[RMDB]
RNA sequence: GGGAACGACUCGAGUAGAGUCGAAAAGGGAGCUGAAAGUAGGAUCAUUAACAUCAAGGGGAAGCUGUACCUGUAUCAGCGCGGUACAUCAUGGUACCCGGUCUGCACCAUGUAUCCCCUUGCAAUCAAUCGUACUGCAGUUCGCUGCAGUACGAUUAAAAGAAACAACAACAACAAC
Reactivity to DMS in 0.01 (KOAc 150mM, MgCl2 10mM, bicine 150mM(pH8.5), 24C), signal-to-noise 4, nucleotides 027 to 126: g010g000g000a050g020c030u020g000a030a080a070g010u000a050g000g010a070u010c080a110u010u000a080a120c170a120u000c020a020a020g010g010g000g010a060a200g010c230u000g020u000a040c010c020u010g020u020a120u010c150a080g020c070g030c150g010g000u000a000c010a040u040c040a020u000g000g000u000a050c030c060c080g010g010u010c050u010g030c160a030c030c000a010u000g010u000a070u000c000c010c000c020u000u000g030c300a080a070u010c150
Reactivity to 2A3 in 0.01 (KOAc 150mM, MgCl2 10mM, bicine 150mM(pH8.5), 24C), signal-to-noise 2, nucleotides 027 to 126: g030g020g000a040g040c050u070g060a080a090a000g070u100a040g050g050a030u050c020a090u050u180a060a090c010a100u150c000a010a010g000g000g020g010a010a040g030c060u040g050u010a020c020c020u090g060u080a170u120c050a030g050c010g000c030g040g000u010a010c000a030u090c020a010u070g050g000u050a060c030c000c000g020g120u030c060u040g020c000a020c020c010a000u040g040u020a120u040c010c000c020c000u000u010g000c070a040a030u140c030